Chemical mapping of a 177-nucleotide RNA with DMS and 2A3.
RNA sequence: GGGAACGACUCGAGUAGAGUCGAAAACCGAUCUCGAAGAUCGCAACAAUCGGAUAGGCUUUGACACGCGGAUUGACGCCAAAGGGCGUCACAUCGCCAUCCGGCGAAAUAACGCGCAGCGUAUCGAAGCCCUAAAUGCUUUCGAGCAUUUAGGGCUAAAAGAAACAACAACAACAAC
Reactivity to DMS in 0.01 (KOAc 150mM, MgCl2 10mM, bicine 150mM(pH8.5), 24C), signal-to-noise 2, nucleotides 027 to 126: c110c000g020a060u010c000u030c190g000a100a200g020a040u000c010g010c140a020a100c190a150a050u000c040g000g000a050u000a060g020g030c040u000u040u010g000a050c130a060c020g010c010g000g000a110u010u030g000a050c000g030c010c000a080a080a060g020g030g040c000g030u000c010a000c270a090u000c010g000c000c020a080u000c140c120g000g000c010g000a030a080a090u040a040a090c070g000c060g020c040a010g010c040g000u000a030u000c010g000a060
Reactivity to 2A3 in 0.01 (KOAc 150mM, MgCl2 10mM, bicine 150mM(pH8.5), 24C), signal-to-noise 2, nucleotides 027 to 126: c000c020g030a060u020c040u060c100g110a120a160g040a150u050c030g000c120a000a060c050a080a210u090c020g020g020a000u020a100g040g010c020u020u060u170g080a100c080a020c060g070c020g060g000a050u030u090g010a030c020g010c010c000a160a300a190g300g050g000c010g010u000c000a010c010a020u020c000g000c020c000a050u030c080c030g000g000c010g050a020a030a070u150a110a030c000g000c000g010c070a060g000c060g060u000a020u030c020g050a050
Conditions: 150 mM KOAc, 10 mM MgCl2 and 150 mM bicine (pH 8.5), 24 C.